[RMDB]
An RNA of 177 nucleotides, treated with DMS and 2A3 and read out base by base. The reactions ran in a buffer of 150 mM KOAc, 10 mM MgCl2 and 150 mM bicine (pH 8.5), at 24 C. The DMS profile rests on 2,568 reads. For 2A3 the reverse transcriptase was SuperScript II with manganese.
RNA sequence: GGGAACGACUCGAGUAGAGUCGAAAAAGAGGGACCGGUGUUCUAUAGUCCGUGUUGAAGAACGGGCCAGGGAGUUGUGAUGGAUGGCGAGGCUAAUUCUAAAAGAAGCAGCCGUAGCGAAAGCGAUUCUUUGUCACGUAUUCGUACGUGACAAAGAAAAAGAAACAACAACAACAAC
Reactivity to DMS in 0.01 (KOAc 150mM, MgCl2 10mM, bicine 150mM(pH8.5), 24C), signal-to-noise 2, nucleotides 027 to 126: a040g000a080g000g000g010a040c060c020g010g000u000g060u010u000c060u000a120u020a090g010u040c010c000g020u010g000u010u060g020a110a080g000a090a030c040g000g000g010c000c030a200g000g010g030a070g000u030u010g050u030g000a190u000g000g010a040u020g000g000c010g010a260g010g020c010u000a020a170u000u000c030u000a120a100a120a240g000a020a010g000c300a080g000c010c030g000u000a120g020c010g000a080a040a160g010c040g010a110u010
Reactivity to 2A3 in 0.01 (KOAc 150mM, MgCl2 10mM, bicine 150mM(pH8.5), 24C), signal-to-noise 3, nucleotides 027 to 126: a000g040a010g000g000g010a000c040c050g020g030u050g030u090u030c070u070a140u070a070g030u010c020c000g030u010g040u110u080g130a160a090g040a120a010c030g010g000g000c000c040a070g050g030g010a090g000u050u050g030u020g060a090u070g020g070a030u050g060g000c030g010a020g000g000c000u000a010a000u080u000c010u070a040a050a050a090g030a000a000g010c000a000g030c000c000g030u080a000g000c000g070a060a010a000g050c030g010a020u000